Conditions: 150 mM KOAc, 10 mM MgCl2 and 150 mM bicine (pH 8.5), 24 C. Chemical mapping of a 177-nucleotide RNA with 2A3 and DMS. For DMS the reverse transcriptase was MarathonRT. Reactivities are given for positions 27 through 126. It was measured as part of the RMDB library TTRDES. 2A3 adducts were read by reverse transcription with SuperScript II with manganese.
RNA sequence: GGGAACGACUCGAGUAGAGUCGAAAAGAUAUGGACCGAUUAUGGGAGGCAACAUUCGGAAACGAAUGCUGCCGAGGAUCAUACUCGGUCCUAAGUCAAAAGCAUCCAUCGUUCGCGAUGGAUGCAAGCUGUCCAUUUAGUUCGCUAAAUGGACAGCAAAAGAAACAACAACAACAAC
Reactivity to 2A3 in 0.01 (KOAc 150mM, MgCl2 10mM, bicine 150mM(pH8.5), 24C), signal-to-noise 2, nucleotides 027 to 126: g000a010u030a030u070g000g000a000c010c010g010a000u010u010a010u030g260g050g040a200g050g000c010a000a000c000a000u000u000c000g010g030a010a000a010c000g020a000a010u000g000c010u010g030c000c010g020a000g020g030a120u110c000a000u010a010c010u000c020g030g010u000c000c000u000a000a000g030u020c000a000a010a060a200g000c000a010u000c000c000a000u000c000g060u090u110c300g020c020g180a000u000g000g000a000u000g010c000a010a000
Reactivity to DMS in 0.01 (KOAc 150mM, MgCl2 10mM, bicine 150mM(pH8.5), 24C), signal-to-noise 2, nucleotides 027 to 126: g010a020u010a170u000g000g000a010c010c000g010a020u000u000a010u000g010g000g020a170g020g000c000a000a010c000a010u000u010c000g020g000a070a010a110c010g010a040a000u000g000c040u000g000c000c000g010a030g010g030a120u020c020a000u000a000c140u000c000g000g000u000c000c000u010a010a090g020u000c020a110a140a240a170g000c000a010u010c000c000a010u000c000g030u000u020c230g010c000g000a020u010g010g000a000u000g000c000a010a020